The data come from the RNA Mapping Database (RMDB), library M2PK90. Chemical mapping of a 177-nucleotide RNA with DMS and 2A3. Conditions: 150 mM KOAc, 10 mM MgCl2 and 150 mM bicine (pH 8.5), 24 C.
RNA sequence: GGGAACGACUCGAGUAGAGUCGAAAAGAAAAGCAGGUCUGAAAAGGGCCAGCAACGUCAGAACAAAAUCGCAAGGUGUAACAAAGAACGCCAAAACUGACGAAUGCGAAAUCAAAAAUGAAAAAAAGUUAGCUAAUUAGUUCGCUAAUUAGCUAACAAAAGAAACAACAACAACAAC
Reactivity to DMS in 0.01 (KOAc 150mM, MgCl2 10mM, bicine 150mM(pH8.5), 24C), signal-to-noise 2, nucleotides 027 to 126: g040a100a050a110a090g030c010a060g070g040u000c000u000g000a060a070a170a160g010g010g060c010c000a080g060c010a080a160c000g010u000c010a020g060a080a100c160a080a080a090a050u000c080g020c130a080a060g000g020u010g000u000a060a100c180a080a110a120g000a140a020c020g020c000c000a080a110a100a090c010u000g000a000c020g010a050a100u000g000c040g020a050a070a020u010c110a030a030a070a070a110u020g010a000a010a110a070a090a050a090
Reactivity to 2A3 in 0.01 (KOAc 150mM, MgCl2 10mM, bicine 150mM(pH8.5), 24C), signal-to-noise 2, nucleotides 027 to 126: g040a010a070a000a010g030c080a040g000g010u000c020u020g070a050a040a150a050g000g000g010c000c000a000g020c010a000a010c000g000u000c010a020g040a160a120c070a080a160a030a060u160c070g010c140a090a080g000g000u020g000u030a060a100c110a060a220a060g090a070a010c000g010c000c000a030a040a000a110c020u020g000a000c000g010a050a000u030g010c010g070a030a010a010u030c020a040a130a150a050a060u220g100a130a070a010a000a000a000a010
DMS adducts were read by reverse transcription with MarathonRT.